[RMDB]
RNA sequence: GGGAACGACUCGAGUAGAGUCGAAAAGAUACUGGUUUUCGAACCAGUAUCGACGCCGAAAUAGCUCAGUUGGGAGAGCGUUAGACUGAAGAUCUAAAGGUCCCUGGUUCGAUCCCGGGUUUCGGCACCACCAUCGGUUGCAUUUCGAUGCAACCGAAUUACUCGAACUAUUCGUAGUUCGAGUAAUAAAAGAAACAACAACAACAAC
Reactivity to DMS in 0.01 (KOAc 150mM, MgCl2 10mM, bicine 150mM(pH8.5), 24C), signal-to-noise 2, nucleotides 027 to 156: g020a020u010a000c010u020g010g010u000u000u000u000c220g040a040a040c010c010a020g010u000a010u000c000g010a080c080g030c000c010g000a040a040a070u000a180g000c010u000c030a070g000u010u000g000g020g010a050g010a060g030c000g020u000u010a060g000a040c030u010g000a120a140g020a300u000c000u010a050a050a140g010g010u000c020c010c000u010g020g000u000u000c020g000a300u000c020c040c030g000g000g010u000u000u000c000g040g010c010a080c020c010a070c060c010a130u000c000g020g000u000u000g000c000a020u000u000u000c190g000a040u000g010c000a020a040c010c000g000a000
Reactivity to 2A3 in 0.01 (KOAc 150mM, MgCl2 10mM, bicine 150mM(pH8.5), 24C), signal-to-noise 5, nucleotides 027 to 156: g000a010u000a000c000u000g010g040u020u020u050u150c200g050a010a010c000c000a000g000u000a000u000c000g000a010c060g000c000c000g000a010a000a010u020a010g000c000u010c020a040g030u260u190g230g160g050a010g010a000g000c000g000u000u010a000g000a010c050u140g150a180a020g050a300u000c000u010a010a000a000g000g000u010c000c000c020u030g000g000u000u010c000g000a000u000c000c000c010g000g010g000u000u010u000c000g000g010c000a010c000c030a020c000c020a060u040c010g010g000u000u000g000c010a020u020u050u170c250g090a010u010g000c000a000a000c000c000g000a000